The record gives the reactivity of an RNA of 207 nucleotides to 2A3. For 2A3, 595 sequencing reads were counted. The reactions ran in a buffer of 150 mM KOAc, 10 mM MgCl2 and 150 mM bicine (pH 8.5), at 24 C.
[RMDB]
RNA sequence: GGGAACGACUCGAGUAGAGUCGAAAACACUGCCGCUCGUCGCGGUAAUUGGCGCCAGGCGCUCCGCUACCUUGCCCUAAACGAAGAUCGAAAGUUUCGAUCAAAACACGUGGCCGGCAGGUGGUUGGAGUUGCAGUUCGGUUGGUUACCACUAAUGCGGCUCAAUUAACUUCGGUUAAUUGAGCCGAAAAGAAACAACAACAACAAC
Reactivity to 2A3 in 0.01 (KOAc 150mM, MgCl2 10mM, bicine 150mM(pH8.5), 24C), signal-to-noise 1, nucleotides 027 to 156: c090a000c050u020g010c000c000g130c020u120c090g300u170c190g020c000g000g000u000a030a170u040u100g060g000c030g000c000c020a050g110g030c020g000c000u000c010c000g000c000u000a000c010c000u040u300g040c000c000c000u130a070a020a000c000g010a080a090g000a000u000c000g000a010a110a090g190u120u180u040c000g000a000u000c000a090a130a020a000c110a000c040g000u010g000g010c020c000g000g000c000a000g000g020u000g000g020u120u300g000g000a000g000u030u220g020c000a000g040u100u080c000g080g000u060u060g090g010u050u040a070c020c030a040c070u120a150a000u200g030